Conditions: 150 mM KOAc, 10 mM MgCl2 and 150 mM bicine (pH 8.5), 24 C. The record gives the reactivity of an RNA of 170 nucleotides to 2A3 and DMS. It was measured as part of the RMDB library 15KLIB. For 2A3, 5,860 sequencing reads were counted.

[RMDB]
RNA sequence: GGGAACGACUCGAGUAGAGUCGAAAAAAGCAAAGAAGGGGAAGGAUCUCGAGGAAGACAUCUCCCAAGAAGAAGCGGGAACAAUCUCAAGAAGAGGAGGAUUCCCCGAGACGCUGACGGAAACCCCAGGCCGCAAAGUUCGCUUUGCGGAAAAGAAACAACAACAACAAC
Reactivity to 2A3 in 0.01 (KOAc 150mM, MgCl2 10mM, bicine 150mM(pH8.5), 24C), signal-to-noise 3, nucleotides 027 to 129: a000a000g180c150a070a050a040g030a100a050g030g040g010g010a050a060g060g010a020u010c030u020c040g010a050g000g030a020a000g000a030c020a130u030c030u000c000c030c010a000a000g050a030a000g030a030a010g060c080g000g000g000a010a010c020a050a080u030c010u010c040a040a110g060a050a010g050a090g010g000a010g020g000a030u040u030c000c000c000c000g020a010g020a010c060g000c040u020g020a030c040g040g000a020a040a040c000c000c000c020a000g080g010
Reactivity to DMS in 0.01 (KOAc 150mM, MgCl2 10mM, bicine 150mM(pH8.5), 24C), signal-to-noise 7, nucleotides 027 to 129: a020a010g020c140a020a050a090g000a050a030g040g080g010g020a060a050g020g010a070u000c000u000c050g040a070g000g000a010a020g030a110c140a080u020c040u020c020c000c000a110a050g000a040a020g030a040a090g060c020g010g010g010a040a120c140a110a110u030c000u070c090a060a080g030a140a070g030a040g030g010a070g010g020a020u010u030c040c030c040c030g020a010g000a070c210g000c060u000g030a090c130g080g010a090a070a100c000c000c000c000a100g010g020